[RMDB]
RNA sequence: GGGAACGACUCGAGUAGAGUCGAAAAACGCACUAUACGUAGUGCGAUACGCUCCUUUGCGUGUUUUAGUCUGGCAUAGAGAAAUUCAUUUAGACGUGUGAUUUCUCUAUGCUUUUAUUAUAUCAAAAAACCGUUAAUCGUUCGCGAUUAACGGUUUAAAAGAAACAACAACAACAAC
Reactivity to DMS in 0.01 (KOAc 150mM, MgCl2 10mM, bicine 150mM(pH8.5), 24C), signal-to-noise 2, nucleotides 027 to 126: a150c000g040c000a000c010u000a020u010a060c150g020u000a010g020u010g000c000g010a080u020a000c130g000c090u010c090c040u000u020u010g000c030g020u000g000u000u010u000u000a100g010u020c160u020g000g010c000a000u010a000g010a010g000a000a000a000u000u000c000a010u010u010u040a160g000a150c210g050u010g000u010g010a030u000u000u000c000u000c000u030a000u000g000c010u000u020u020u050a100u030u010a090u030a130u030c030a000a060a080